This 207-nucleotide RNA was probed chemically with 2A3 and DMS. For DMS the reverse transcriptase was MarathonRT. 2A3 is a SHAPE reagent: it acylates the 2'-hydroxyl of flexible nucleotides of all four kinds. It was measured as part of the RMDB library OK3TST. 2A3 adducts were read by reverse transcription with SuperScript II with manganese. For DMS, 2,491 sequencing reads were counted. The 2A3 profile rests on 3,531 reads.

RNA sequence: GGGAACGACUCGAGUAGAGUCGAAAAUCUCUAGAGGCAGUCUCCUGGUGGGAAAGUUCUGGAUCUGGAGCUUCUAAGUCAGCACAUGGAUAAGCUUGCUGUGUAGGGAGUGUCUGGUGAAGGGAAGGUAAAGGUUAUUGCAUUUCUAAAGAGCUAACACUAUCAAGUACUUCGGUACUUGAUAGUGAAAAGAAACAACAACAACAAC
Reactivity to 2A3 in 0.01 (KOAc 150mM, MgCl2 10mM, bicine 150mM(pH8.5), 24C), signal-to-noise 4, nucleotides 027 to 156: u010c010u000c030u020a010g010a040g060g000c010a010g030u010c010u000c050c000u080g060g020u140g050g030g010a070a070a020g020u110u040c030u050g040g000a040u000c010u020g020g010a010g000c010u030u000c010u040a080a070g060u070c010a000g060c020a020c040a100u150g180g060a190u200a240a060g050c080u090u080g010c010u030g000u000g020u050a070g030g000g000a010g010u060g240u010c020u020g000g020u030g020a020a010g020g000g010a030a010g020g000u100a070a040a030g020g000u010u020a030u040u050g010c040a040u040u130u000c050u070a120a090a020g060a010g030c070u080a050a000
Reactivity to DMS in 0.01 (KOAc 150mM, MgCl2 10mM, bicine 150mM(pH8.5), 24C), signal-to-noise 2, nucleotides 027 to 156: u000c030u000c010u000a070g010a090g000g000c020a050g020u000c020u010c020c070u010g010g040u010g020g060g010a050a070a100g020u000u000c020u000g030g000a170u010c060u000g000g020a220g040c040u010u010c070u020a060a270g030u020c040a070g000c000a120c040a110u000g010g020a120u000a120a110g000c130u000u010g050c020u010g040u000g030u020a220g010g030g000a090g020u000g010u000c010u010g000g000u000g030a300a250g000g030g020a090a070g000g020u000a070a100a010g040g010u000u000a040u010u000g000c000a220u010u000u000c030u000a030a120a090g010a110g020c080u010a050a230